[RMDB]
RNA sequence: GGGAACGACUCGAGUAGAGUCGAAAAGAUAUGGAAGUCCCGUCAUUCUUCCUUCAGGGAGCUAUAAGGUCGGAAACGACCUUGUAGCAUCGAUCUGACUGGGAAGAAUGACGGGACUUCCUAAGUCGAUAAUCCGGUAGUUCGCUACCGGAUUAUCAAAAGAAACAACAACAACAAC
Reactivity to DMS in 0.01 (KOAc 150mM, MgCl2 10mM, bicine 150mM(pH8.5), 24C), signal-to-noise 1, nucleotides 027 to 126: g010a130u010a300u020g000g010a030a020g000u000c000c000c010g000u000c000a000u000u000c010u000u000c000c000u010u000c000a020g010g000g010a030g060c010u010a000u000a000a000g000g050u010c000g020g020a090a120a300c000g000a020c000c000u010u020g010u000a000g010c000a190u010c180g000a060u030c020u010g010a050c300u000g000g010g000a030a000g000a000a010u000g010a030c000g010g000g000a000c000u000u000c000c000u000a040a040g020u000c110
Chemical mapping of a 177-nucleotide RNA with DMS.
It was measured as part of the RMDB library TTRINS.
The reactions ran in a buffer of 150 mM KOAc, 10 mM MgCl2 and 150 mM bicine (pH 8.5), at 24 C.